[RMDB]
RNA sequence: GGGAACGACUCGAGUAGAGUCGAAAAGGAUAGUAGUUCGCUACUAUCCAAAAGAUCUAUGAAAAUACAUCAAAAAUGGUGGUGCUCACCAAAGAGCAAAAAAAACACAUAGCUUCGGCUAUGUGAAGAAUCAUUGAGACUUCGGUCUCAAUGAUUCAAAAGAAACAACAACAACAAC
Reactivity to 2A3 in 0.01 (KOAc 150mM, MgCl2 10mM, bicine 150mM(pH8.5), 24C), signal-to-noise 2, nucleotides 027 to 126: g000g010a000u010a000g010u000a010g020u030u020c150g030c050u020a010c000u010a000u030c010c010a000a000a000a000g020a030u000c030u030a120u140g030a020a010a050a040u150a030c020a050u030c030a050a050a150a090a170u190g000g020u010g020g040u020g000c010u020c020a060c030c010a050a040a010g000a000g000c000a000a010a010a010a010a010a010a010c000a000c000a000u010a010g010c010u010u020c260g070g000c000u000a000u010g000u000g000a010a010
Reactivity to DMS in 0.01 (KOAc 150mM, MgCl2 10mM, bicine 150mM(pH8.5), 24C), signal-to-noise 1, nucleotides 027 to 126: g010g010a000u010a000g020u000a000g000u000u010c240g010c000u000a030c000u000a010u000c000c000a010a050a110a110g000a090u000c160u000a030u010g000a120a070a090a010u000a020c090a050u000c030a030a060a110a140a020u020g010g000u000g000g000u000g010c010u000c030a090c020c070a030a040a050g000a020g000c010a000a000a000a040a020a050a050a120c010a000c000a000u000a010g020c000u000u000c260g030g020c010u000a000u000g000u000g010a070a040